The data come from the RNA Mapping Database (RMDB), library M2PK50. Chemical mapping of a 177-nucleotide RNA with 2A3 and DMS. Reactivities are given for positions 27 through 126. The DMS profile rests on 4,912 reads.
[RMDB]
RNA sequence: GGGAACGACUCGAGUAGAGUCGAAAAAUGGUGACCUUCGGGUCACCAUGGUGCGUAGCUGCGUUAAUUUAAUAGCUACGCUUAAUAAAUUUAAUUAACGCUAUGGAGCCUGCUUCGGCAGGCUCAAUAAUUUCAAUUGAUUCGUCAAUUGAAAUUAAAAAGAAACAACAACAACAAC
Reactivity to 2A3 in 0.01 (KOAc 150mM, MgCl2 10mM, bicine 150mM(pH8.5), 24C), signal-to-noise 1, nucleotides 027 to 126: a000u010g000g000u000g000a010c000c000u020u000c250g160g000g010u020c030a010c000c000a000u000g020g000u030g000c000g000u010a010g020c030u030g030c000g010u020u020a040a040u050u140u190a190a220u220a060g000c000u020a020c010g000c030u000u060a030a010u160a010a050a000u200u250u140a020a050u050u040a000a000c010g000c050u030a070u170g100g000a010g000c000c010u000g030c000u080u010c090g000g000c030a010g000g000c010u000c000a000a000
Reactivity to DMS in 0.01 (KOAc 150mM, MgCl2 10mM, bicine 150mM(pH8.5), 24C), signal-to-noise 3, nucleotides 027 to 126: a020u000g000g010u010g000a010c000c000u000u010c200g030g010g020u000c000a000c000c000a000u000g000g030u010g010c000g010u000a000g010c020u010g010c020g010u000u000a020a050u000u000u000a090a090u010a060g010c000u000a000c010g000c000u000u000a010a060u000a060a090a140u010u000u010a060a040u010u000a010a000c010g010c040u010a110u010g010g010a020g030c000c000u000g010c010u000u010c210g010g010c000a000g000g010c000u010c000a010a030
For DMS the reverse transcriptase was MarathonRT.